The record gives the reactivity of an RNA of 177 nucleotides to DMS and 2A3. Source: RMDB library OK2TRN, as collected in RNAgym. The RNA was probed in 150 mM KOAc, 10 mM MgCl2 and 150 mM bicine (pH 8.5) at 24 C. The 2A3 profile rests on 5,553 reads. Reactivities are given for positions 27 through 126.
RNA sequence: GGGAACGACUCGAGUAGAGUCGAAAAGCCGGUACUGGUACGCGUGAUCACGAUCUGACAUAGCGCUCAUGAUGCGCCGUGCAGGCCAGGCCGACGUGCGCGGCCUAGCACUACGGCCGUACGCACAGCGAAUCUAUGAGUUCGCUCAUAGAUUCGCAAAAGAAACAACAACAACAAC
Reactivity to DMS in 0.01 (KOAc 150mM, MgCl2 10mM, bicine 150mM(pH8.5), 24C), signal-to-noise 3, nucleotides 027 to 126: g030c040c010g020g020u010a090c030u010g020g000u000a040c100g000c100g020u020g010a110u000c070a110c100g000a110u010c050u010g000a160c090a080u010a050g010c040g020c020u010c140a120u000g000a080u000g020c020g020c020c000g000u010g010c040a070g010g010c020c010a050g000g000c000c000g010a030c060g000u000g000c040g000c020g000g000c020c000u000a130g010c160a100c120u010a100c140g010g020c000c010g010u000a070c100g030c010a010c020a160
Reactivity to 2A3 in 0.01 (KOAc 150mM, MgCl2 10mM, bicine 150mM(pH8.5), 24C), signal-to-noise 4, nucleotides 027 to 126: g030c020c000g000g020u140a300c030u040g010g020u060a090c030g040c020g110u070g100a230u170c130a020c090g060a110u010c040u040g120a120c040a090u140a020g030c030g010c020u020c070a200u230g100a090u150g000c000g010c040c020g040u020g010c000a030g070g000c010c010a010g010g000c010c000g030a060c080g040u030g000c030g010c010g030g000c000c000u020a070g090c140a060c190u090a020c090g020g000c000c000g000u030a060c020g000c000a000c010a010